This 177-nucleotide RNA was probed chemically with DMS.
Conditions: 150 mM KOAc, 10 mM MgCl2 and 150 mM bicine (pH 8.5), 24 C.
DMS adducts were read by reverse transcription with MarathonRT.
It was measured as part of the RMDB library M2PK90.
For DMS, 479 sequencing reads were counted.
RNA sequence: GGGAACGACUCGAGUAGAGUCGAAAAGAAAAAGGAGGACAUGUCCGCCUGAUUGUGUCCGACCCUGUAGAUACUUCGCUCUGCAAAUUGUGCGGGACAACCCACGCGCGCAGCGAGCCGAAAAAAAACACCAUUGAGGUUUCGACCUCAAUGGUGUAAAAGAAACAACAACAACAAC
Reactivity to DMS in 0.01 (KOAc 150mM, MgCl2 10mM, bicine 150mM(pH8.5), 24C), signal-to-noise 1, nucleotides 027 to 126: g010a000a060a120a060a060g000g040a300g050g000a010c010a050u010g010u000c030c250g010c190c100u000g010a030u000u000g040u000g000u000c060c020g000a240c170c030c000u000g010u000a050g000a130u000a080c100u000u000c010g040c060u000c000u000g000c030a090a090a050u000u010g040u010g000c050g060g030g030a220c130a150a010c050c010c000a140c040g030c010g000c100g010c130a030g090c040g000a010g010c040c040g050a000a040a000a040a060a020a120